[RMDB]
RNA sequence: GGGAACGACUCGAGUAGAGUCGAAAAAAAGGUUUGUCCGCAGAUGGUCGGCCAACGCCAUACGCUGCACACAGGUUUUCGCGCAUCUGCUGUUCAGCGCGCUCCUGAAAGUCUUCAUCAUCACAGGACAUCAUUUGCUGCAUGUUGGUCAGCAGCGUCUGCUUAGUUCGUUCGCGAACUAAGCAGAAAAAGAAACAACAACAACAAC
Reactivity to DMS in 0.01 (KOAc 150mM, MgCl2 10mM, bicine 150mM(pH8.5), 24C), signal-to-noise 1, nucleotides 027 to 156: a040a070a100g030g050u000u000u000g000u000c020c020g040c060a300g030a100u000g080g010u000c020g010g010c020c000a030a150c060g000c010c010a100u000a050c040g010c000u030g000c060a140c080a070c040a040g000g020u000u000u000u010c080g030c130g010c140a040u000c010u000g010c040u000g050u000u000c010a090g000c010g010c040g000c150u000c040c010u000g000a120a080a050g010u000c040u000u000c070a070u010c040a040u010c040a120c120a110g030g000a050c070a120u000c060a070u030u000u010g020c000u010g060c000a030u000g080u000u000g000g010u010c010a210g000c010a030g000c010g030
Reactivity to 2A3 in 0.01 (KOAc 150mM, MgCl2 10mM, bicine 150mM(pH8.5), 24C), signal-to-noise 2, nucleotides 027 to 156: a000a000a000g090g000u080u050u080g050u030c030c020g040c040a060g020a190u060g030g010u060c010g000g000c000c000a040a020c020g040c010c000a030u050a050c040g010c030u030g030c050a000c000a000c000a020g090g050u030u030u110u120c050g040c020g010c040a070u070c010u050g060c120u040g020u080u060c010a020g000c020g020c030g010c040u060c010c010u000g070a070a080a050g040u010c010u120u050c060a130u060c010a040u040c030a090c010a110g040g000a020c010a030u080c060a050u060u160u110g000c020u000g010c000a040u090g010u040u020g040g030u100c040a010g000c000a000g000c000g030